Chemical mapping of a 207-nucleotide RNA with 2A3. Values are in units of 0.01, from 0 to 300, in steps of 10. 2A3 is a SHAPE reagent: it acylates the 2'-hydroxyl of flexible nucleotides of all four kinds. For 2A3, 639 sequencing reads were counted.
RNA sequence: GGGAACGACUCGAGUAGAGUCGAAAAAGGAUACCGUGCUCCACAGCUGGAAGGCUGUGGGCCCGAGAGAAGCGCUCUCUCUCGCCCUUCUACUCCCCCUCGGCAUAGAGAUGUCCAUAGGCCAGGGGUGAGAUCCAACGGGAUCACAGCUGAUCUAGAAUAAAAUCCACUUCGGUGGAUUUUAUUCAAAAGAAACAACAACAACAAC
Reactivity to 2A3 in 0.01 (KOAc 150mM, MgCl2 10mM, bicine 150mM(pH8.5), 24C), signal-to-noise 1, nucleotides 027 to 156: a000g170g010a120u160a200c010c010g040u170g010c010u000c060c000a010c000a000g000c030u050g080g130a160a020g090g000c000u010g010u010g020g000g000c020c000c000g010a010g000a000g000a110a080g010c110g020c110u060c010u000c000u000c000u000c080g000c000c020c000u020u100c060u130a140c000u000c000c000c000c000c000u030c130g000g000c010a060u140a050g070a020g010a110u180g040u060c030c020a130u140a140g060g000c030c000a000g000g020g000g020u150g010a030g020a010u000c030c040a120a000c060g090g000g000a000u030c010a040c040a080g140c110u150g020a070u030c040u080a100